[RMDB]
RNA sequence: GGGAACGACUCGAGUAGAGUCGAAAAGGUAUGAAAUCAAUUAUUAAAAUGCUUGGUACAGACCAAUUUAAACGUAUUCGUAUUGGUGUGGGAAGACCAACGAAUGGUAUGACGGUACCUGAUUAUGCCGUCGCACACCUUUCGAGGUGUGCGACGGAAAAGAAACAACAACAACAAC
Reactivity to 2A3 in 0.01 (KOAc 150mM, MgCl2 10mM, bicine 150mM(pH8.5), 24C), signal-to-noise 2, nucleotides 027 to 126: g060g020u060a020u040g010a110a110a000u060c060a020a180u070u030a080u060u070a300a150a030a120u160g110c050u050u050g000g000u000a020c000a030g090a000c000c000a020a120u080u080u040a140a070a040c030g070u150a100u290u210c010g080u000a000u070u020g000g000u090g030u020g160g020g000a000a190g150a000c000c000a000a030c050g000a000a010u050g000g000u070a100u080g040a090c000g150g070u060a000c010c050u030g030a040u120u100a150u300g000